[RMDB]
RNA sequence: GGGAACGACUCGAGUAGAGUCGAAAAAGCGUCGCAGCUUCGGCACGAAGAGGAAUGUCCCGACAAUGCCUAGGGCCACACCGGCAAUGAGGUAGAGCACCGUGGCAUUCGGGACGAAAUGAGAUAGCCGCGAUGUAAUAUUCGUAUUACAUCGCGGAAAAGAAACAACAACAACAAC
Reactivity to DMS in 0.01 (KOAc 150mM, MgCl2 10mM, bicine 150mM(pH8.5), 24C), signal-to-noise 2, nucleotides 027 to 126: a020g010c040g000u000c030g050c060a050g010c060u000u000c150g000g050c090a050c000g010a140a110g000a090g000g000a080a060u100g030u000c000c000c020g000a080c300a060a020u000g000c000c000u000a230g010g000g000c000c060a120c140a010c010c040g010g020c180a160a130u030g000a180g000g000u000a120g000a270g000c000a060c010c010g000u020g000g000c020a020u000u000c000g030g000g000a010c000g000a000a060a100u000g000a070g000a080u000a070g000
Reactivity to 2A3 in 0.01 (KOAc 150mM, MgCl2 10mM, bicine 150mM(pH8.5), 24C), signal-to-noise 4, nucleotides 027 to 126: a000g010c000g040u050c010g020c050a030g020c030u070u010c040g060g030c050a030c100g080a100a060g060a040g070g090a160a100u240g010u010c010c000c000g000a000c050a020a020u020g000c010c010u070a180g000g010g030c040c000a110c000a040c090c000g140g090c130a050a200u300g080a170g070g010u070a050g000a010g040c020a090c230c000g000u010g000g000c000a010u160u000c000g000g000g000a000c000g000a000a000a020u190g010a040g040a030u130a090g020